[RMDB]
RNA sequence: GGGAACGACUCGAGUAGAGUCGAAAACGUCUGCCCAUCCUCGGUUAAAUCUAGCAGACUGGUUUCCGGGUGCGCUUUGCCUGUCGUGCUGCCCGGCGACGAGACCUAACGGCGAGGAUAAGCAUGUAGGGCCGGGGAUGGAGUACUUUCGGACGGCCCCAAGAUUCCUGUUCGCAGGAAUCUUGGGAAAAGAAACAACAACAACAAC
Reactivity to 2A3 in 0.01 (KOAc 150mM, MgCl2 10mM, bicine 150mM(pH8.5), 24C), signal-to-noise 2, nucleotides 027 to 156: c030g000u000c000u020g010c030c000c000a010u000c000c000u000c000g000g030u100u160a060a150a160u100c060u110a040g050c010a040g050a150c030u050g060g010u030u020u000c000c000g000g010g030u030g030c090g030c040u080u150u160g070c020c040u090g080u210c050g010u020g010c020u090g020c010c010c000g000g020c000g010a010c030g040a000g070a040c010c020u050a140a030c050g030g000c020g020a070g080g000a080u040a030a020g020c070a050u160g000u110a040g020g030g000c010c000g000g000g000g000a000u000g010g020a030g020u140a120c090u050u220u150c010g010g010a010c010g050g000c010
The data come from the RNA Mapping Database (RMDB), library ARCHII. The record gives the reactivity of an RNA of 207 nucleotides to 2A3. 2A3 adducts were read by reverse transcription with SuperScript II with manganese. Values cover nucleotides 27 to 156. For 2A3, 1,065 sequencing reads were counted. The reactions ran in a buffer of 150 mM KOAc, 10 mM MgCl2 and 150 mM bicine (pH 8.5), at 24 C.